[RMDB]
Chemical mapping of a 177-nucleotide RNA with DMS and 2A3. For DMS the reverse transcriptase was MarathonRT. Values are in units of 0.01, from 0 to 300, in steps of 10.
RNA sequence: GGGAACGACUCGAGUAGAGUCGAAAAGAAAGAAAGAAGCCAUCCAGUGACCCGGGGUUGUAUUGUAACCAAGCUGUAAGUGUCCAUGAUGCAUGGGUAUGAUACGACCUGGGUUACAGAAUGGUAAAUCUUUGUUACAUUUCGAUGUAACAAAGAUAAAAGAAACAACAACAACAAC
Reactivity to DMS in 0.01 (KOAc 150mM, MgCl2 10mM, bicine 150mM(pH8.5), 24C), signal-to-noise 7, nucleotides 027 to 126: g010a120a090a120g010a100a100a110g010a130a180g010c000c010a010u010c030c030a110g010u000g000a010c000c000c000g010g010g010g010u010u000g010u000a000u010u020g010u000a010a010c000c000a010a050g010c010u000g010u010a130a130g020u020g010u030c130c090a090u010g000a140u020g010c010a100u010g010g000g000u000a010u000g000a010u000a000c000g000a010c000c000u000g010g000g000u000u000a000c000a050g010a030a010u000g010g000u000a030a100
Reactivity to 2A3 in 0.01 (KOAc 150mM, MgCl2 10mM, bicine 150mM(pH8.5), 24C), signal-to-noise 9, nucleotides 027 to 126: g080a020a060a000g080a020a120a000g070a100a010g020c000c000a000u010c020c040a040g010u000g000a000c000c000c010g020g010g010g010u020u020g000u000a000u000u010g010u010a010a030c000c010a020a030g010c010u050g050u270a130a080g070u100g130u270c110c050a150u230g040a070u130g070c010a030u020g010g000g000u010a000u010g000a000u000a000c000g000a000c000c000u000g000g000g000u000u000a000c000a000g010a020a020u000g010g000u070a110a060